[RMDB]
Overview
The record gives the reactivity of an RNA of 177 nucleotides to DMS.
RNA sequence: GGGAACGACUCGAGUAGAGUCGAAAAGAUAUGGAACGGACGGAUCCUGAACUACGUUCGGGAUCAAGUCAUCGGAAACGAUGACUUGAUUCUCUAGCGUGACGCAGGAGAAGUCCGUUCCUAAGUCCAUCGAAAUACACUUCGGUGUAUUUCGAUGAAAAGAAACAACAACAACAAC
Reactivity to DMS in 0.01 (KOAc 150mM, MgCl2 10mM, bicine 150mM(pH8.5), 24C), signal-to-noise 2, nucleotides 027 to 126: g000a100u000a300u010g030g000a050a000c010g020g010a010c020g060g030a300u000c000c000u020g010a110a170c110u010a000c010g010u010u000c140g000g010g040a020u000c040a030a000g020u000c000a030u010c000g020g030a120a160a250c000g030a000u010g000a020c000u010u000g000a020u010u010c000u010c030u010a000g010c000g000u000g020a070c300g000c020a000g010g010a020g000a300a190g010u000c000c000g000u000u000c000c000u000a000a100g010u000c040
DMS adducts were read by reverse transcription with MarathonRT. It was measured as part of the RMDB library TTRINS.